Background:
An RNA of 177 nucleotides, treated with 2A3 and read out base by base. It was measured as part of the RMDB library RFM100. The reactions ran in a buffer of 150 mM KOAc, 10 mM MgCl2 and 150 mM bicine (pH 8.5), at 24 C.
[RMDB]
RNA sequence: GGGAACGACUCGAGUAGAGUCGAAAAAUUCUUUCUAAAUUAGAGGCAAUUUGAAAUAAUUUAAAUUAGCUCAACCCUACUGCACUUACCGAACUAGAUAACGGUGUAGUAGGGGUAAAUUCUCCGCUGAGGUUAAUUUUUUCGAAAAUUAACCUCAAAAAGAAACAACAACAACAAC
Reactivity to 2A3 in 0.01 (KOAc 150mM, MgCl2 10mM, bicine 150mM(pH8.5), 24C), signal-to-noise 1, nucleotides 027 to 126: a000u110u000c050u000u150u020c030u080a060a070a120u050u090a070g000a000g100g070c000a000a020u020u000u040g070a080a060a020u130a150a130u100u070u080a020a040a030u020u040a010g000c000u010c000a030a060c000c010c000u000a000c010u020g000c000a000c000u010u050a010c090c000g180a180a050c050u070a090g050a180u140a220a000c020g030g000u000g020u000a000g000u000a010g030g000g000g000u000a010a000a000u000u010c030u000c000c030g040c080